[RMDB]
RNA sequence: GGGAACGACUCGAGUAGAGUCGAAAAAGAACAAAAAUUGUGACCUUUUUGGUGUCCACAGACUAGGGCUUUGUCUACAUUUCACCAUCAUCUGUUCUUGUACCACAGAAACAUGGAAGUUUUCUUUCCGAAGUUCAAGCUAGAUCAGAAGUAUGAGCUACGAUUGGUAAUUCGUUACCAAUCGUAGAAAAGAAACAACAACAACAAC
Reactivity to 2A3 in 0.01 (KOAc 150mM, MgCl2 10mM, bicine 150mM(pH8.5), 24C), signal-to-noise 5, nucleotides 027 to 156: a000g040a030a020c040a020a090a070a080a090u180u150g020u090g070a100c010c000u050u030u040u090u210g080g000u050g020u050c060c030a050c030a030g050a030c040u090a060g010g050g050c000u070u090u090g050u020c030u050a060c040a110u100u110u120c060a060c050c010a030u060c010a030u000c050u030g000u040u000c000u020u060g050u080a100c040c030a050c040a040g080a050a090a010c030a040u160g040g000a040a050g010u100u050u110u110c000u030u070u000c030c030g050a140a020g000u040u060c030a040a020g010c010u030a020g020a060u040c040a010g030a100a010g130u160a100u220g040a020g060
Reactivity to DMS in 0.01 (KOAc 150mM, MgCl2 10mM, bicine 150mM(pH8.5), 24C), signal-to-noise 2, nucleotides 027 to 156: a030g000a080a140c030a050a040a110a080a120u000u010g000u010g040a130c050c010u000u000u000u010u010g020g030u010g000u010c040c040a080c060a050g010a100c050u000a120g040g000g030c000u000u000u000g020u000c040u000a110c070a080u000u010u000c000a160c060c030a040u000c070a230u010c010u000g020u000u000c010u000u000g000u000a160c030c040a070c070a060g000a080a060a110c110a070u000g000g010a060a070g020u000u010u020u000c030u000u010u000c020c020g010a050a110g020u000u000c050a030a180g030c030u000a080g000a080u000c040a090g010a060a100g030u000a110u000g000a060g030
Structure probing data (2A3 and DMS) for a 207-nucleotide construct. It was measured as part of the RMDB library OK3TST. The 2A3 profile rests on 2,766 reads. Values cover nucleotides 27 to 156. DMS adducts were read by reverse transcription with MarathonRT.